[RMDB]
RNA sequence: GGGAACGACUCGAGUAGAGUCGAAAAGAUAUGGACCCAUUCAACAGCUACUGGUCGGAAACGACCAAGUAGACAUGAAUGGUCCUAAGUCAAAAGGUGCUGUAUAGGUUCGCCUAUACAGCACCAAGGAUAGUACUCUGUUCGCAGAGUACUAUCCAAAAGAAACAACAACAACAAC
Reactivity to DMS in 0.01 (KOAc 150mM, MgCl2 10mM, bicine 150mM(pH8.5), 24C), signal-to-noise 4, nucleotides 027 to 126: g010a020u000a300u000g010g010a000c080c080c090a000u000u000c010a040a110c300a160g010c000u000a000c000u000g000g000u000c000g010g000a050a070a120c010g000a020c000c000a010a040g000u000a000g010a110c070a180u000g000a030a000u000g000g000u000c000c000u000a020a080g000u010c040a110a070a130a110g010g000u000g010c000u000g000u000a000u000a010g000g000u000u000c230g020c000c000u000a000u000a000c000a000g010c000a000c000c010a000a030
Reactivity to 2A3 in 0.01 (KOAc 150mM, MgCl2 10mM, bicine 150mM(pH8.5), 24C), signal-to-noise 3, nucleotides 027 to 126: g010a010u030a040u070g010g010a010c080c160c040a010u000u000c010a060a180c070a180g020c010u010a000c010u010g010g000u000c010g000g030a060a030a040c010g000a000c000c000a010a010g000u000a010g100a100c030a030u030g000a000a010u000g000g000u010c000c000u020a070a020g040u020c040a010a000a080a260g010g000u010g000c000u000g010u010a000u000a010g030g060u050u100c300g100c040c000u000a000u000a000c010a000g000c010a000c000c000a000a000
Chemical mapping of a 177-nucleotide RNA with DMS and 2A3. Source: RMDB library TTRDEL, as collected in RNAgym. For 2A3, 9,525 sequencing reads were counted. Conditions: 150 mM KOAc, 10 mM MgCl2 and 150 mM bicine (pH 8.5), 24 C. For DMS the reverse transcriptase was MarathonRT. DMS (dimethyl sulfate) methylates the pairing face of unpaired adenines and cytosines.